[RMDB]
RNA sequence: GGGAACGACUCGAGUAGAGUCGAAAAAUGACAUUCACUUUGGAUCUUGGCAUAAUGAUCUGCGAUCUACGCCUUGGUCACAGUCCAUUCCAAGACAGCGAACGGAGGAAAUACAUAUCGCAGACUCCCGUAUUAGCUCAUUCGUGAGCUAAUACGGAAAAGAAACAACAACAACAAC
Reactivity to 2A3 in 0.01 (KOAc 150mM, MgCl2 10mM, bicine 150mM(pH8.5), 24C), signal-to-noise 6, nucleotides 027 to 126: a000u150g030a020c070a080u090u090c050a080c140u100u100u160g060g010a030u020c010u030u030g010g000c020a090u090a180a140u280g050a100u010c000u030g020c030g010a010u010c030u100a060c080g000c010c000u000u050g040g000u020c020a030c030a090g030u010c020c010a060u050u000c010c000a030a030g090a040c050a020g050c030g070a040a030c020g020g050a040g030g070a040a080a000u180a010c040a050u190a010u030c010g010c030a000g010a050c020u010c000
Reactivity to DMS in 0.01 (KOAc 150mM, MgCl2 10mM, bicine 150mM(pH8.5), 24C), signal-to-noise 3, nucleotides 027 to 126: a040u010g020a100c100a060u010u020c100a120c100u010u010u000g000g010a040u000c010u000u010g000g020c300a110u090a090a080u010g010a120u030c000u000g000c040g000a020u000c090u030a080c180g000c030c040u000u010g030g020u010c030a020c050a080g000u000c030c070a100u030u000c050c050a040a040g010a060c090a060g000c070g030a030a050c060g000g000a070g010g000a030a090a060u030a070c200a060u020a080u000c030g000c010a010g000a110c100u020c060
This 177-nucleotide RNA was probed chemically with 2A3 and DMS. Conditions: 150 mM KOAc, 10 mM MgCl2 and 150 mM bicine (pH 8.5), 24 C. DMS adducts were read by reverse transcription with MarathonRT. The 2A3 profile rests on 11,857 reads. Source: RMDB library OK1LIB, as collected in RNAgym.